[RMDB]
RNA sequence: GGGAACGACUCGAGUAGAGUCGAAAAGCAACUUAGGAUUUUAGGCUCCCCGUGCGUGUCUCGAACCAUGCCGGGCCAAACCCACGGGGGCUGGCGGUCCCCGUGCGGUCAAAAUCAAAUCGCUGGAAAAACAGUUCUAGCUUCGGCUAGAACUGAAGAACUUCCUAAGGUUCGCCUUAGGAAGUUCAAAAGAAACAACAACAACAAC
Reactivity to 2A3 in 0.01 (KOAc 150mM, MgCl2 10mM, bicine 150mM(pH8.5), 24C), signal-to-noise 2, nucleotides 027 to 156: g000c020a020a110c110u160u220a180g070g080a170u140u050u100u230a060g000g020c030u060c020c020c030c010g070u230g050c020g000u030g010u000c110u100c240g050a050a020c050c000a010u020g000c010c010g000g030g000c000c000a050a080a020c010c000c000a000c000g020g000g000g030g010c000u000g000g000c010g000g020u020c020c000c000c000g000u010g010c120g000g000u020c030a150a010a020a140u090c040a080a060a060u060c000g030c060u070g060g010a120a070a000a000a000c000a000g000u000u000c010u000a000g010c000u010u030c200g110g000c000u000a000g000a000a000c000u000g000a000a020